[RMDB]
RNA sequence: GGGAACGACUCGAGUAGAGUCGAAAAACUAGUAUGUACACGAUGAGACUGCCGUGUCGUCUAGACUGCGGAUCCAACAAUCUCAGAUCUGCGAGAUAUUGUCUCAAGAGUACGAGACAAGUACUCAGUGUUAGGACUACUUCGGUGGUCUUAACACAAAAGAAACAACAACAACAAC
Reactivity to DMS in 0.01 (KOAc 150mM, MgCl2 10mM, bicine 150mM(pH8.5), 24C), signal-to-noise 9, nucleotides 027 to 126: a130c020u000a020g000u040a010u010g010u040a010c010a030c030g010a150u010g010a100g010a080c090u010g010c050c010g010u000g000u000c020g000u000c030u010a010g010a150c080u020g010c040g010g000a010u000c030c130a100a100c160a090a080u020c090u000c100a110g000a040u000c010u000g000c010g000a050g010a080u020a070u010u010g000u000c000u000c010a080a050g000a090g010u020a030c060g000a090g010a070c150a050a060g000u010a060c010u000c010a140
Reactivity to 2A3 in 0.01 (KOAc 150mM, MgCl2 10mM, bicine 150mM(pH8.5), 24C), signal-to-noise 9, nucleotides 027 to 126: a000c010u020a010g070u130a040u060g100u090a010c010a000c020g040a050u130g030a030g080a080c070u100g110c070c000g000u000g000u000c000g000u000c010u010a030g040a120c030u050g000c000g010g000a000u000c030c010a050a040c030a080a170u060c060u030c100a020g010a050u000c000u010g010c030g040a020g010a020u170a050u050u090g010u000c010u000c010a030a010g070a020g070u060a030c050g010a000g030a060c040a050a020g020u020a020c000u000c030a010